[RMDB]
RNA sequence: GGGAACGACUCGAGUAGAGUCGAAAACAAGCUGGUCGAUUAUGCAGAACGGGUUGCCGAGGGGCAGAAUGUUGCGCUACCCGUGAUGGGCAGCAGCGAACUGAAUGAUUUGGCGCGAGCGCUGGAAGUCUUUACUGCCAUUCGUGGCAGUAAAGACAAAAGAAACAACAACAACAAC
Reactivity to DMS in 0.01 (KOAc 150mM, MgCl2 10mM, bicine 150mM(pH8.5), 24C), signal-to-noise 2, nucleotides 027 to 126: c120a080a130g010c030u000g000g020u000c040g020a120u010u010a060u000g000c070a010g010a090a130c090g040g010g050u000u000g000c020c040g040a150g000g010g010g010c060a030g000a060a060u000g000u020u010g010c070g010c010u000a040c010c000c010g010u020g020a110u000g030g010g020c020a010g020c000a070g040c000g020a000a140c030u000g000a080a040u000g010a140u000u000u010g030g010c030g050c090g010a070g010c060g020c050u000g000g000a120a130
Reactivity to 2A3 in 0.01 (KOAc 150mM, MgCl2 10mM, bicine 150mM(pH8.5), 24C), signal-to-noise 1, nucleotides 027 to 126: c020a010a020g020c000u030g020g030u040c000g030a070u000u110a050u280g050c030a010g010a060a020c050g120g000g000u100u110g010c030c000g070a110g010g030g030g000c040a010g100a110a110u150g040u040u040g020c020g020c040u020a010c000c020c050g080u130g120a230u190g000g040g000c030a010g000c010a030g060c010g010a020a010c000u030g030a060a010u070g010a050u000u070u160g060g000c040g000c100g130a030g050c120g000c030u050g020g040a080a000

Background:
Structure probing data (DMS and 2A3) for a 177-nucleotide construct. The reactions ran in a buffer of 150 mM KOAc, 10 mM MgCl2 and 150 mM bicine (pH 8.5), at 24 C. It was measured as part of the RMDB library OK2TST. Reactivities are given for positions 27 through 126.